[RMDB]
RNA sequence: GGGAACGACUCGAGUAGAGUCGAAAAGAUAUGGAGUGAGCGAAGAACAUAGGUAUCGUGCGAACUAUCGCUUCGGAAACGAAGCGAUAGGAGGUAUACGACACCUAUGGGAGCUCACUCCUAAGUCCCUUCAAUGAGAGUUCGCUCUCAUUGAAGGAAAAGAAACAACAACAACAAC
Reactivity to DMS in 0.01 (KOAc 150mM, MgCl2 10mM, bicine 150mM(pH8.5), 24C), signal-to-noise 2, nucleotides 027 to 126: g000a100u000a280u010g000g010a020g020u010g000a010g010c010g010a150a190g030a160a180c020a020u020a030g020g020u000a060u000c000g020u000g000c060g020a120a270c000u000a000u000c000g010c000u000u010c000g000g010a090a110a210c000g000a020a000g000c000g000a000u000a000g000g010a000g010g020u010a080u010a040c000g000a010c060a000c000c000u000a010u000g000g000g000a100g000c000u010c000a000c000u000c000c010u000a010a110g010u000c020
The record gives the reactivity of an RNA of 177 nucleotides to DMS. Conditions: 150 mM KOAc, 10 mM MgCl2 and 150 mM bicine (pH 8.5), 24 C. It was measured as part of the RMDB library TTRINS. The DMS profile rests on 2,827 reads.